[RMDB]
RNA sequence: GGGAACGACUCGAGUAGAGUCGAAAAGAUAUGGAGCGACUCGACAGAGCUAAACUCAGCGAAGAACUAAUUCGGAAACGAAUUAGGGAGCUGAGCACUAGCGACGAAGUCGAGUCGCUCCUAAGUCCAAUAAUGGGGAGUUCGCUCCCCAUUAUUGAAAAGAAACAACAACAACAAC
Reactivity to DMS in 0.01 (KOAc 150mM, MgCl2 10mM, bicine 150mM(pH8.5), 24C), signal-to-noise 4, nucleotides 027 to 126: g020a110u010a300u000g000g010a020g020c010g030a010c000u000c010g040a030c020a100g000a300g010c000u000a010a110a220c000u010c000a010g000c010g000a120a160g000a160a230c000u000a000a000u000u010c000g000g010a130a150a220c010g000a000a000u000u000a020g020g030g000a050g010c010u000g000a010g020c060a090c260u000a020g010c000g000a170c260g010a160a120g000u000c000g000a010g010u000c000g000c000u000c000c000u000a000a070g010u000c070
Conditions: 150 mM KOAc, 10 mM MgCl2 and 150 mM bicine (pH 8.5), 24 C. This 177-nucleotide RNA was probed chemically with DMS. It was measured as part of the RMDB library TTRINS. Values cover nucleotides 27 to 126. For DMS the reverse transcriptase was MarathonRT.